[RMDB]
Background:
This 177-nucleotide RNA was probed chemically with DMS and 2A3. The reactions ran in a buffer of 150 mM KOAc, 10 mM MgCl2 and 150 mM bicine (pH 8.5), at 24 C.
RNA sequence: GGGAACGACUCGAGUAGAGUCGAAAAUCAGGAACUGUGGGCGCUCCUGAGUGUCAAGGCAGUUGGCGGAUUCUACAUCGGCGGCCUUCCAGAACGUCGAGGAUUCCGUAAGGUUGGAGGGACGUUCGAUUUAGUAGACAUUCGUGUCUACUAAAUCAAAAGAAACAACAACAACAAC
Reactivity to DMS in 0.01 (KOAc 150mM, MgCl2 10mM, bicine 150mM(pH8.5), 24C), signal-to-noise 7, nucleotides 027 to 126: u000c040a070g010g000a040a060c060u010g020u000g010g010g020c080g010c070u000c030c060u000g000a050g020u000g010u000c070a080a090g010g010c070a060g010u000u000g010g020c020g010g000a050u000u000c040u000a080c100a130u000c030g010g010c040g000g000c060c030u000u000c090c070a140g000a050a050c030g010u000c030g010a080g000g000a130u000u000c020c010g010u010a080a060g010g010u010u000g010g010a170g010g010g010a110c060g010u010u000c060
Reactivity to 2A3 in 0.01 (KOAc 150mM, MgCl2 10mM, bicine 150mM(pH8.5), 24C), signal-to-noise 4, nucleotides 027 to 126: u060c010a010g030g040a030a060c020u090g000u100g100g040g000c040g000c030u020c030c040u070g060a020g020u070g050u050c050a040a040g070g030c020a030g030u040u060g050g010c020g010g010a000u060u000c010u060a080c030a150u020c010g030g020c030g010g070c030c000u100u050c030c000a030g020a130a030c020g010u030c020g030a050g040g030a050u070u000c010c000g030u050a070a030g050g020u050u060g020g030a060g020g010g000a010c020g030u040u060c000
Description:
For 2A3 the reverse transcriptase was SuperScript II with manganese.